[RMDB]
RNA sequence: GGGAACGACUCGAGUAGAGUCGAAAAUGGGGCUCCAGGGCGCGUGGAGCUGCGCUGUGAGGUGGCCCCAGCUGGGUCUCAGGUGCGCUGGUACAAGGACGGGCUGGAAGUGGAGGCAUCAGAUGCCCUUACCUCGGAAUUUCGAUUCCGAGGUAAGAAAAGAAACAACAACAACAAC
Reactivity to DMS in 0.01 (KOAc 150mM, MgCl2 10mM, bicine 150mM(pH8.5), 24C), signal-to-noise 4, nucleotides 027 to 126: u000g030g000g010g040c000u000c020c020a130g010g000g020c010g020c010g040u030g040g000a140g020c100u010g000c020g010c010u000g010u010g010a110g020g030u010g010g000c000c010c010c010a010g020c050u000g000g010g010u000c040u000c060a070g010g020u000g010c060g020c040u000g010g010u010a060c130a100a090g000g010a080c110g010g000g020c060u010g010g000a070a080g010u020g010g020a110g000g010c040a030u010c090a060g010a300u000g000c030c050
Reactivity to 2A3 in 0.01 (KOAc 150mM, MgCl2 10mM, bicine 150mM(pH8.5), 24C), signal-to-noise 2, nucleotides 027 to 126: u040g000g020g010g020c000u000c010c000a030g050g040g000c020g000c000g090u120g120g080a070g030c030u040g010c030g000c000u080g100u100g260a170g020g070u100g030g010c000c010c010c000a010g000c000u040g010g000g000u000c020u030c040a040g070g040u030g000c040g030c030u030g040g020u100a060c010a080a070g050g010a000c010g010g000g000c050u050g010g020a070a040g010u060g050g030a070g040g010c000a010u040c020a080g060a080u060g010c000c000
Structure probing data (DMS and 2A3) for a 177-nucleotide construct. It was measured as part of the RMDB library OK2TRN. The reactions ran in a buffer of 150 mM KOAc, 10 mM MgCl2 and 150 mM bicine (pH 8.5), at 24 C. For 2A3, 2,169 sequencing reads were counted.